[RMDB]
RNA sequence: GGGAACGACUCGAGUAGAGUCGAAAACCAUGCAUCUUUUGCGACAGACAACGUUUAUAUAUUAAACAAAUGUCUUACUAUAGAUGCUAUAGUAAAUAUCUCUAUCCGUAUUGAACCACAAAUCAAUCUGUAUCUUAUAAUUCGUUAUAAGAUACAGAAAAGAAACAACAACAACAAC
Reactivity to 2A3 in 0.01 (KOAc 150mM, MgCl2 10mM, bicine 150mM(pH8.5), 24C), signal-to-noise 9, nucleotides 027 to 126: c000c000a020u060g010c000a010u010c030u030u170u160u080g070c110g050a040c050a050g010a000c010a040a020c080g010u000u020u000a080u010a040u020a050u070u190a050a010a000c020a020a140a130u070g000u000c000u010u030a030c010u020a020u040a040g020a020u020g000c030u030a020u030a070g060u050a010a090a100u130a100u050c050u000c030u060a090u070c040c040g060u040a080u060u120g060a070a060c040c010a050c090a090a100a090u110c040a020a070u010
Reactivity to DMS in 0.01 (KOAc 150mM, MgCl2 10mM, bicine 150mM(pH8.5), 24C), signal-to-noise 4, nucleotides 027 to 126: c020c010a090u060g020c010a010u000c000u020u000u010u010g010c120g000a160c300a020g000a020c020a020a160c300g000u000u000u000a010u010a180u020a160u040u010a000a000a010c000a050a120a170u040g010u000c010u000u000a150c100u000a040u000a010g010a050u000g000c000u000a070u010a060g010u000a020a080a130u020a050u020c010u000c040u010a060u000c040c020g000u010a030u000u000g010a050a190c070c010a050c210a070a130a090u000c080a070a180u010

Chemical mapping of a 177-nucleotide RNA with 2A3 and DMS. Values cover nucleotides 27 to 126. It was measured as part of the RMDB libraries RFM100 and RFMREP. The reactions ran in a buffer of 150 mM KOAc, 10 mM MgCl2 and 150 mM bicine (pH 8.5), at 24 C.